RNA sequence: GGGAACGACUCGAGUAGAGUCGAAAACAGAAUUGCCACGAUUAAGUACAACCCGUUUAAGUAAAAAACACCCAAACAAAUCAUUACUUUAAUCUUGGAAAUGUUUGGUUAUAACGAUAUGGUGGAAAUUAAUUGGGAUAUUCGUAUCCCAAUUAAUAAAAGAAACAACAACAACAAC
Reactivity to 2A3 in 0.01 (KOAc 150mM, MgCl2 10mM, bicine 150mM(pH8.5), 24C), signal-to-noise 4, nucleotides 027 to 126: c020a010g200a090a060u100u110g060c010c000a010c000g090a030u060u070a100a020g030u040a040c020a060a060c050c000c020g000u050u070u070a130a090g020u100a070a060a030a000a050a010c040a030c020c000c020a010a000a000c010a000a030a000u050c010a020u020u120a050c040u230u200u250a140a090u070c020u040u060g110g000a020a030a040u020g030u000u010u000g040g000u040u080a100u020a060a030c020g000a020u030a050u230g080g010u030g000g000a000a080
Reactivity to DMS in 0.01 (KOAc 150mM, MgCl2 10mM, bicine 150mM(pH8.5), 24C), signal-to-noise 6, nucleotides 027 to 126: c070a140g000a090a070u010u010g010c010c000a020c030g010a050u000u000a060a130g010u010a100c120a090a100c040c030c050g010u010u000u010a070a130g010u000a000a070a100a090a080a070c140a060c240c010c010a010a010a020c010a020a030a200u000c070a050u010u000a060c090u020u010u010a050a150u010c060u000u010g010g010a030a040a200u000g000u000u000u000g000g000u010u010a060u000a070a040c070g010a100u010a030u000g010g040u000g010g000a060a090
The record gives the reactivity of an RNA of 177 nucleotides to 2A3 and DMS. For 2A3, 4,545 sequencing reads were counted. It was measured as part of the RMDB library OK2TST. Conditions: 150 mM KOAc, 10 mM MgCl2 and 150 mM bicine (pH 8.5), 24 C. The DMS profile rests on 6,338 reads.